[RMDB]
RNA sequence: GGGAACGACUCGAGUAGAGUCGAAAAACCAUCCUAUUCGUAGGAUGGUGCACCAUUGGCGAUUGUAUAUAAUACCGCAGGCGGAAAAGCGGUUCAAAUAAGGAACUUGUCAGUUCGCUGACAAGAAACUUGCUAACGCUUUCGAGCGUUAGCAAGUAAAAGAAACAACAACAACAAC
Reactivity to DMS in 0.01 (KOAc 150mM, MgCl2 10mM, bicine 150mM(pH8.5), 24C), signal-to-noise 1, nucleotides 027 to 126: a010c000c000a000u010c000c000u000a010u010u010c130g010u000a010g000g000a020u000g010g010u000g000c130a260c010c010a090u000u000g010g020c060g020a120u000u020g000u000a070u000a110u000a090a080u010a030c030c020g020c030a050g000g010c040g000g000a050a030a110a070g000c020g010g000u000u000c150a020a040a100u010a060a090g010g010a080a150c000u000u000g010u000c000a020g000u000u000c290g020c000u000g000a010c010a000a010g000a070a060
Conditions: 150 mM KOAc, 10 mM MgCl2 and 150 mM bicine (pH 8.5), 24 C. The record gives the reactivity of an RNA of 177 nucleotides to DMS. Values are in units of 0.01, from 0 to 300, in steps of 10. It was measured as part of the RMDB library M2PK50. Reactivities are given for positions 27 through 126. The DMS profile rests on 859 reads.